[RMDB]
An RNA of 177 nucleotides, treated with DMS and 2A3 and read out base by base. For 2A3 the reverse transcriptase was SuperScript II with manganese. The RNA was probed in 150 mM KOAc, 10 mM MgCl2 and 150 mM bicine (pH 8.5) at 24 C. For 2A3, 1,239 sequencing reads were counted. DMS (dimethyl sulfate) methylates the pairing face of unpaired adenines and cytosines. The data come from the RNA Mapping Database (RMDB), library OK2TST.

RNA sequence: GGGAACGACUCGAGUAGAGUCGAAAAUCGACAAAUAUUUAAAAGCUCAUUCUAAAUCAACUUAUUUUCCAUUGCAUAAAUUGCUGCUUGUGUACGAUCGCUAACUUGUAAUUUACUAAAUAUAUGACUAUGAUUCGUAAUUCGUUACGAAUCAUAGAAAAGAAACAACAACAACAAC
Reactivity to DMS in 0.01 (KOAc 150mM, MgCl2 10mM, bicine 150mM(pH8.5), 24C), signal-to-noise 3, nucleotides 027 to 126: u010c030g000a140c090a070a130a090u010a090u010u000u000a060a070a100a130g020c070u000c080a070u000u000c050u000a060a060a090u010c080a050a060c060u010u000a080u000u000u000u000c010c030a070u000u010g020c060a050u000a030a080a070u000u000g000c030u000g000c050u000u000g020u000g000u000a040c080g000a050u000c050g010c070u000a060a070c060u000u000g010u020a050a100u000u000u010a090c030u000a020a030a100u010a080u010a080u010g000a220
Reactivity to 2A3 in 0.01 (KOAc 150mM, MgCl2 10mM, bicine 150mM(pH8.5), 24C), signal-to-noise 2, nucleotides 027 to 126: u020c000g000a000c030a070a180a020u090a150u150u300u190a090a230a030a000g030c000u010c070a120u120u040c070u120a130a130a030u020c020a010a090c040u090u120a090u010u040u000u000c040c000a030u020u090g000c000a010u050a050a170a090u090u070g040c030u020g020c000u020u090g040u010g050u150a010c010g080a120u100c010g000c060u010a060a070c030u000u060g010u080a060a100u120u090u080a020c030u060a060a070a100u180a060u080a050u210g000a000